[RMDB]
RNA sequence: GGGAACGACUCGAGUAGAGUCGAAAAGUAUUUUGCGUGCUGGUGCUCCUGAUGGUUUUUGUAAACAUGGUGAUACUUUUGUGUCAAGGGUCACAGCAGUUAAGGGCACUGUUAUAGUUACACAAGCCUCAUAUAGUGCGUUCGCGCACUAUAUGAGAAAAGAAACAACAACAACAAC
Reactivity to DMS in 0.01 (KOAc 150mM, MgCl2 10mM, bicine 150mM(pH8.5), 24C), signal-to-noise 4, nucleotides 027 to 126: g020u010a060u000u010u000u000g010c050g030u000g000c030u000g030g010u000g020c020u000c020c020u000g010a080u010g010g010u000u000u000u010u010g010u010a040a040a050c070a100u010g020g020u000g000a040u000a050c020u000u000u010u010g020u010g010u000c120a060a040g000g000g010u000c030a040c030a090g000c080a110g010u000u000a050a100g000g000g000c060a040c020u000g010u000u010a090u010a070g010u010u010a030c040a050c070a060a100g010c200
Reactivity to 2A3 in 0.01 (KOAc 150mM, MgCl2 10mM, bicine 150mM(pH8.5), 24C), signal-to-noise 3, nucleotides 027 to 126: g030u040a120u070u120u120u080g050c020g030u030g010c020u030g000g060u020g000c020u060c050c010u040g030a110u060g020g110u040u060u010u100u170g200u190a080a080a010c030a040u050g060g000u040g070a030u170a280c000u050u170u100u150g100u020g030u040c040a020a030g050g000g000u010c020a020c000a020g000c020a010g020u040u070a030a030g010g030g000c030a000c050u000g010u020u090a210u070a130g070u060u110a020c020a020c030a050a080g040c000